[RMDB]
Conditions: 150 mM KOAc, 10 mM MgCl2 and 150 mM bicine (pH 8.5), 24 C. An RNA of 170 nucleotides, treated with DMS and 2A3 and read out base by base. DMS adducts were read by reverse transcription with MarathonRT. The DMS profile rests on 2,872 reads.

RNA sequence: GGGAACGACUCGAGUAGAGUCGAAAAGAGAACCACGCGGAGAAGGCGGAAAAAUCACCUCCAGAGGACCCCUUCAGCGAACAGAAGAGCCCCGCACGGGAUAGGAGUAAGACCAUAGCGAUGGGGGAAGGGGAUCGCUUCGGCGAUCCCAAAAGAAACAACAACAACAAC
Reactivity to DMS in 0.01 (KOAc 150mM, MgCl2 10mM, bicine 150mM(pH8.5), 24C), signal-to-noise 2, nucleotides 027 to 129: g010a130g020a060a170c100c030a090c140g030c040g050g010a080g010a060a240g000g000c150g030g110a030a020a080a080a130u020c160a110c080c000u000c060c070a120g040a180g020g000a120c040c020c080c020u000u060c000a080g010c070g020a070a090c110a110g050a090a070g000a070g030c150c000c090c050g000c130a140c120g030g000g120a030u060a140g010g030a080g030u000a010a090g090a030c090c040a080u000a180g060c070g000a070u020g010g030g000g000g050a120a000g010
Reactivity to 2A3 in 0.01 (KOAc 150mM, MgCl2 10mM, bicine 150mM(pH8.5), 24C), signal-to-noise 2, nucleotides 027 to 129: g060a000g000a000a040c020c020a020c030g050c030g020g070a060g000a100a020g020g010c070g000g030a000a230a000a000a000u070c010a030c000c000u010c030c000a020g000a040g070g000a070c070c000c000c000u040u060c050a020g030c030g040a000a000c000a040g060a040a020g040a000g070c000c020c000c000g030c070a060c060g020g000g100a020u000a090g040g000a020g060u050a080a000g090a040c010c010a030u070a040g000c050g070a040u030g000g000g000g000g000a030a030g000